[RMDB]
RNA sequence: GGGAACGACUCGAGUAGAGUCGAAAACGUGAACAUCGCUCUGCUAAGUCCCGUCGUUCUUCCAGUCAGAGCGAGAUUGUAAGCAACCUUAUGCGCAAUGAAGACAUAGAGGGACUUCUAGAUGAAGAAUCCGAGUAUAUUUCGAUAUACUCGGAUUAAAAGAAACAACAACAACAAC
Reactivity to DMS in 0.01 (KOAc 150mM, MgCl2 10mM, bicine 150mM(pH8.5), 24C), signal-to-noise 9, nucleotides 027 to 126: c140g020u030g010a110a100c130a120u010c000g000c010u000c010u000g020c130u020a060a050g000u010c030c020c040g010u010c040g010u010u000c020u010u020c040c080a080g010u030c010a010g010a010g000c010g000a030g000a070u000u010g000u000a090a140g020c050a070a130c120c100u030u010a060u000g010c040g010c060a070a060u020g010a120a090g000a100c070a050u010a050g020a070g010g000g000a080c010u010u000c090u010a070g000a110u030g010a100a080g010
Reactivity to 2A3 in 0.01 (KOAc 150mM, MgCl2 10mM, bicine 150mM(pH8.5), 24C), signal-to-noise 9, nucleotides 027 to 126: c070g100u120g080a080a030c030a110u010c000g000c010u000c000u010g040c030u060a040a030g050u050c000c020c030g050u040c020g010u050u010c000u070u020c020c000a080g100u150c010a000g000a000g010c040g010a010g010a020u020u040g040u090a080a070g010c010a040a090c040c050u130u120a070u160g030c050g000c020a020a100u150g050a100a030g050a020c040a040u120a030g100a050g020g010g020a010c000u010u000c030u050a160g000a140u160g070a070a050g040
The record gives the reactivity of an RNA of 177 nucleotides to DMS and 2A3. For 2A3 the reverse transcriptase was SuperScript II with manganese. Source: RMDB library OK1LIB, as collected in RNAgym. The 2A3 profile rests on 15,621 reads. Reactivities are given for positions 27 through 126.